[RMDB]
Source: RMDB library OK3TST, as collected in RNAgym. Structure probing data (DMS and 2A3) for a 207-nucleotide construct. The RNA was probed in 150 mM KOAc, 10 mM MgCl2 and 150 mM bicine (pH 8.5) at 24 C. DMS adducts were read by reverse transcription with MarathonRT. The 2A3 profile rests on 1,258 reads. Reactivities are given for positions 27 through 156.

RNA sequence: GGGAACGACUCGAGUAGAGUCGAAAACGAGAAGAAGAACAUUAUCAGGAGAAAGCAGACCGUGAAAAUAUGUUCCUGACACCUUCCACAGACCACAGCCCUUUCUUGAAAGGAAACCAAAAUAGCUUACAACACAAGGAUUCAGGCUCUUCAGCUAGUUUUAAUGGCAGUUCGCUGCCAUUAAAACAAAAGAAACAACAACAACAAC
Reactivity to DMS in 0.01 (KOAc 150mM, MgCl2 10mM, bicine 150mM(pH8.5), 24C), signal-to-noise 1, nucleotides 027 to 156: c050g000a080g010a090a040g010a050a120g060a070a100c030a100u000u000a060u000c010a080g020g010a210g000a100a110a110g030c040a020g000a140c120c000g020u000g010a110a070a050a160u000a110u010g000u000u000c020c000u000g000a110c050a030c110c040u000u010c020c030a120c010a060g010a110c030c030a020c100a110g000c060c020c020u000u010u020c100u010u010g000a040a100a050g000g010a070a030a130c000c020a000a010a080a070u000a040g000c020u000u000a120c010a020a060c090a130c060a040a070g010g020a060u000u020c040a070g010g030c040u000c040u000u000c030a060g000c110u000a110
Reactivity to 2A3 in 0.01 (KOAc 150mM, MgCl2 10mM, bicine 150mM(pH8.5), 24C), signal-to-noise 2, nucleotides 027 to 156: c050g020a010g010a080a010g020a060a010g020a030a020c010a050u070u110a060u190c040a020g010g020a060g070a110a100a010g040c020a010g060a070c040c010g110u110g040a050a080a040a010u120a030u110g040u020u020c000c000u020g040a030c010a030c060c000u040u030c010c010a040c010a050g060a060c030c020a030c040a030g060c020c010c010u010u070u020c040u030u050g070a060a040a020g000g010a040a010a000c020c020a010a020a010a070u060a020g030c010u040u050a060c050a100a000c010a020c010a040a050g020g010a010u050u060c020a010g000g040c000u000c020u090u040c010a030g030c010u040a040